Structure probing data (DMS and 2A3) for a 207-nucleotide construct. The RNA was probed in 150 mM KOAc, 10 mM MgCl2 and 150 mM bicine (pH 8.5) at 24 C.
RNA sequence: GGGAACGACUCGAGUAGAGUCGAAAAAGAUAGGUUCGCUAUGGUGCAACUCUUUAAGGCAAUAACGAACUAAUUCUAAGCAAGUAAUGGAGAAAUGCCAGGGUCACUAUCUAGCCAUAAUAGUGCUGUAAGUGACUUAGAUUCGUCUAAGUCACAACAUUUUAGAUUCCUUCGGGAAUCUAAAAUGAAAAGAAACAACAACAACAAC
Reactivity to DMS in 0.01 (KOAc 150mM, MgCl2 10mM, bicine 150mM(pH8.5), 24C), signal-to-noise 3, nucleotides 027 to 156: a060g010a030u000a100g020g010u000u000c010g010c040u000a040u000g000g020u000g020c030a100a130c070u010c110u000u010u000a080a130g010g020c010a090a040u000a040a040c030g030a040a050c030u000a040a180u000u000c030u000a050a150g000c040a060a120g000u000a070a090u000g020g010a100g000a050a080a090u000g030c000c030a070g020g040g030u000c040a030c010u010a010u000c040u000a100g000c040c050a090u000a050a100u010a100g020u000g020c030u010g010u000a050a140g030u000g010a030c000u000u010a000g010a080u000u010c300g020u000c000u000a010a030g010u000c000a000c010a040a120
Reactivity to 2A3 in 0.01 (KOAc 150mM, MgCl2 10mM, bicine 150mM(pH8.5), 24C), signal-to-noise 6, nucleotides 027 to 156: a000g050a030u070a040g030g000u020u020c030g010c040u050a030u070g080g070u070g050c060a150a220c060u090c090u140u220u150a120a070g070g000c010a040a050u070a110a020c020g030a010a010c040u030a010a030u080u040c060u100a070a000g050c040a050a060g060u160a100a080u130g040g020a040g040a080a110a030u080g030c030c010a050g010g000g020u050c020a010c050u020a030u100c020u030a010g020c000c010a020u060a150a070u070a100g070u050g040c040u040g040u130a170a090g000u000g000a000c000u000u000a000g000a000u020u020c100g010u000c150u000a000a000g000u000c000a000c000a010a000